This 177-nucleotide RNA was probed chemically with DMS.

RNA sequence: GGGAACGACUCGAGUAGAGUCGAAAAGAGGAUUUCGGAGCCGUUGGAGAUGAGGCCGAAGCUGUAGAUGUGUCCGCUUGUCGACGGCACCACGCCGACCAGCGCCGAUACUCCUGUGAGGGUUCCGUCCGAGAAUCCUGUUCGCAGGAUUCUCGGAAAAAGAAACAACAACAACAAC
Reactivity to DMS in 0.01 (KOAc 150mM, MgCl2 10mM, bicine 150mM(pH8.5), 24C), signal-to-noise 1, nucleotides 027 to 126: g000a160g000g010a140u010u030u010c000g000g020a060g020c010c060g030u000u010g000g000a030g000a090u000g000a220g000g030c090c180g030a050a110g020c020u000g030u000a130g010a080u000g000u000g000u000c050c020g010c010u000u000g020u030c080g000a090c010g000g010c140a130c110c090a110c000g000c020c000g000a170c280c030a010g000c060g030c070c010g000a170u000a100c030u000c000c000u000g020u000g000a150g010g000g010u000u000c000c010g000
It was measured as part of the RMDB library OK2TST.